[RMDB]
RNA sequence: GGGAACGACUCGAGUAGAGUCGAAAAGGAGUUAAGUUCGCUUAACUCCCACUACCGAGAAUCCGACUCGGUAUAUCGCAAUAACCCUUGGAAACAAGGGAACCACUGACGACUUCGGUCGUCAGAAGCCUAUAAACGAGUUCGCUCGUUUAUAGGCAAAAGAAACAACAACAACAAC
Reactivity to 2A3 in 0.01 (KOAc 150mM, MgCl2 10mM, bicine 150mM(pH8.5), 24C), signal-to-noise 2, nucleotides 027 to 126: g000g000a000g000u010u010a000a000g020u070u110c100g010c120u000u010a000a000c000u000c020c010c000a080c020u020a000c000c000g000a000g040a020a110u090c070c030g120a050c040u000c010g030g000u010a000u010a000u010c020g030c050a030a070u070a200a220c000c000c050u000u000g010g030a050a070a030c010a010a020g000g000g020a000a030c030c030a040c050u000g000a000c000g000a010c000u020u050c250g110g000u000c000g000u000c000a000g000a010a010
Reactivity to DMS in 0.01 (KOAc 150mM, MgCl2 10mM, bicine 150mM(pH8.5), 24C), signal-to-noise 2, nucleotides 027 to 126: g000g000a010g040u000u030a000a000g010u010u010c230g050c000u010u010a000a010c000u000c000c000c080a050c140u000a000c000c000g000a020g020a080a160u000c140c170g050a070c000u010c000g030g010u000a020u000a050u040c160g010c200a120a090u060a100a120c000c000c000u000u010g000g010a170a060a130c000a040a030g000g010g010a040a030c140c190a130c000u000g000a020c000g030a010c000u000u010c200g020g020u000c010g010u000c000a000g000a090a170
Overview
Structure probing data (2A3 and DMS) for a 177-nucleotide construct. The 2A3 profile rests on 1,983 reads. For DMS, 937 sequencing reads were counted. For 2A3 the reverse transcriptase was SuperScript II with manganese.